Structure probing data (2A3) for a 177-nucleotide construct. 2A3 adducts were read by reverse transcription with SuperScript II with manganese. The 2A3 profile rests on 622 reads. Reactivities are given for positions 27 through 126. The RNA was probed in 150 mM KOAc, 10 mM MgCl2 and 150 mM bicine (pH 8.5) at 24 C.

RNA sequence: GGGAACGACUCGAGUAGAGUCGAAAAAAUAUUUUGGAUGGAUGCACCUAGAUGGUUAUCUACCAGUAUAUAUUUACUUAUGGGGUGGGCAAUUGUUUUUGAUAUAAAUGCAUUCAAUUCAAUUCCUAUCAUCCACCAUCUUCGGAUGGUGGAUGAUAAAAGAAACAACAACAACAAC
Reactivity to 2A3 in 0.01 (KOAc 150mM, MgCl2 10mM, bicine 150mM(pH8.5), 24C), signal-to-noise 2, nucleotides 027 to 126: a000a000u240a060u030u050u000u000g010g000a020u020g000g000a000u000g010c010a040c000c020u040a120g010a160u140g010g000u030u020a010u080c000u010a020c000c000a020g170u010a010u000a000u020a060u160u230u000a140c030u120u120a090u160g130g000g020g000u020g000g000g000c030a000a000u020u020g210u070u000u060u060u040g230a070u070a030u050a140a100a000u020g020c020a000u000u070c050a110a280u010u000c030a000a090u000u050c000c000u040